[RMDB]
RNA sequence: GGGAACGACUCGAGUAGAGUCGAAAAGUGCCUCGUCGGCCCGGCAUGCCAACCUGAUCCGAAGUUCAAGGUGGUUUCUCUGGCCUUCCAGAGAGAUGCGCGUUGGAAGAACCGACGAACAAACCUUAAAACAAAACGACGUUCGCGUCGUUUUGAACAUGGAAGUCUUCUUCGGAAGACUUCCAUGAAAAGAAACAACAACAACAAC
Reactivity to 2A3 in 0.01 (KOAc 150mM, MgCl2 10mM, bicine 150mM(pH8.5), 24C), signal-to-noise 1, nucleotides 027 to 156: g020u020g100c010c000u020c020g010u000c000g000g000c010c020c000g010g000c020a020u100g010c000c020a140a210c090c010u030g020a020u050c000c030g050a080a020g020u020u040c040a030a020g010g000u020g000g000u040u110u000c000u000c000u000g020g050c050c060u300u070c020c010a000g000a000g010a000g000a010u070g010c250g000c040g080u120u190g050g010a090a030g020a150a060c000c000g000a010c000g030a030a010c030a030a040a070c010c020u120u230a030a070a030a120c010a000a000a000a000c000g010a000c000g000u030u030c220g020c000g140u000c000g000u010u030u000u000g000a000a000
An RNA of 207 nucleotides, treated with 2A3 and read out base by base. 2A3 adducts were read by reverse transcription with SuperScript II with manganese. It was measured as part of the RMDB library M2RFPK.